An RNA of 177 nucleotides, treated with 2A3 and DMS and read out base by base. The 2A3 profile rests on 5,163 reads. Values cover nucleotides 27 to 126. High 2A3 reactivity points to a flexible backbone, as in loops and unpaired stretches.
RNA sequence: GGGAACGACUCGAGUAGAGUCGAAAAUAAGUGUCCAGGCAGUCGCCUGGGGUGGGGAGAGGAAUGGGGAAGGGGAAAGGAGGACACUCAUCCACACACAUGGCGCAUGCACACACAAUACACACACCUACUACUUACGAUUCGUCGUAAGUAGUAGAAAAGAAACAACAACAACAAC
Reactivity to 2A3 in 0.01 (KOAc 150mM, MgCl2 10mM, bicine 150mM(pH8.5), 24C), signal-to-noise 4, nucleotides 027 to 126: u100a030a040g050u000g020u010c020c000a010g020g000c010a040g230u300c150g060c010c020u000g010g000g000g030u200g000g020g030g010a110g000a030g010g100a220a130u100g010g000g010g080a050a050g040g010g010g020a050a050a060g080g020a040g000g040a010c010a010c020u030c000a080u010c000c000a010c010a000c000a000c010a060u080g030g000c010g010c020a030u040g010c000a020c010a000c000a000c010a070a040u130a050c060a000c000a010c010a010c070
Reactivity to DMS in 0.01 (KOAc 150mM, MgCl2 10mM, bicine 150mM(pH8.5), 24C), signal-to-noise 2, nucleotides 027 to 126: u000a090a050g000u010g080u000c000c000a000g040g050c000a190g000u000c220g010c000c010u000g030g010g000g000u010g020g000g010g000a140g010a150g000g010a110a150u010g000g000g030g020a110a030g010g010g000g010a080a050a040g000g030a030g000g020a070c110a030c030u010c030a080u010c020c030a000c040a120c100a030c080a030u000g010g000c090g000c050a040u000g000c040a060c050a030c080a020c120a010a070u000a050c070a050c090a090c130a070c110